The record gives the reactivity of an RNA of 177 nucleotides to 2A3 and DMS. Source: RMDB library OK2TST, as collected in RNAgym.

RNA sequence: GGGAACGACUCGAGUAGAGUCGAAAAUAUGUCUUUCGGAUCGUUUUCCGACGGAGAGAUUGAUGAGCUGAGCCGCAGAGUAACUGAGUCCGAACCCGUCCUGUUUGGAUCAUUUGAACCGGGCGAACGCUACCAACAGUUUCGACUGUUGGUAGCGAAAAGAAACAACAACAACAAC
Reactivity to 2A3 in 0.01 (KOAc 150mM, MgCl2 10mM, bicine 150mM(pH8.5), 24C), signal-to-noise 1, nucleotides 027 to 126: u180a050u090g090u010c000u000u030u010c020g000g040a070u020c050g090u000u070u140u140c020c020g030a030c010g000g030a030g010a000g010a030u010u250g010a040u090g030a020g040c050u040g080a010g060c000c000g030c070a020g030a020g110u000a040a030c040u080g000a010g050u020c000c000g000a000a040c030c020c000g000u020c020c000u030g010u080u010u040g090g000a110u160c050a090u100u060u180g000a030a010c010c020g020g000g000c000g000a100a020
Reactivity to DMS in 0.01 (KOAc 150mM, MgCl2 10mM, bicine 150mM(pH8.5), 24C), signal-to-noise 2, nucleotides 027 to 126: u010a070u000g010u000c040u000u000u010c000g010g000a050u010c300g020u000u000u000u000c000c020g010a050c130g050g000a100g010a060g020a050u030u010g000a090u010g000a090g000c020u000g000a120g030c050c000g030c070a040g000a100g000u020a090a060c060u000g000a050g010u000c010c000g000a300a150c040c020c030g020u000c010c030u000g030u000u010u000g030g010a110u010c150a140u000u000u000g030a070a070c050c080g000g000g010c020g000a020a070